[RMDB]
RNA sequence: GGGAACGACUCGAGUAGAGUCGAAAAGAUAUGGAGGUUGUGUCAGCCAACAGCUCGGAAACGAGACAUGGCUCCCACACGGCCUCCUAAGUCAAAACGCCAUGUUGUGUUCGCACAACAUGGCGAACGCAAUUGAUGUCUUCGGACAUCAAUUGCGAAAAGAAACAACAACAACAAC
Reactivity to DMS in 0.01 (KOAc 150mM, MgCl2 10mM, bicine 150mM(pH8.5), 24C), signal-to-noise 1, nucleotides 027 to 126: g000a050u000a300u020g020g000a010g000g020u020u070g010u000g000u010c150a050g000c010c000a000a110c300a240g000c000u000c000g000g000a070a100a160c000g010a020g000a030c110a120u000g000g000c000u000c040c200c300a000c000a000c030g010g000c010c000u000c000c000u010a000a050g010u020c020a090a090a150a190c020g000c010c010a030u000g040u000u000g040u000g000u010u010c160g000c030a010c020a020a030c020a000u000g020g000c020g000a030a040

Structure probing data (DMS) for a 177-nucleotide construct. Source: RMDB library TTRDEL, as collected in RNAgym. Values cover nucleotides 27 to 126.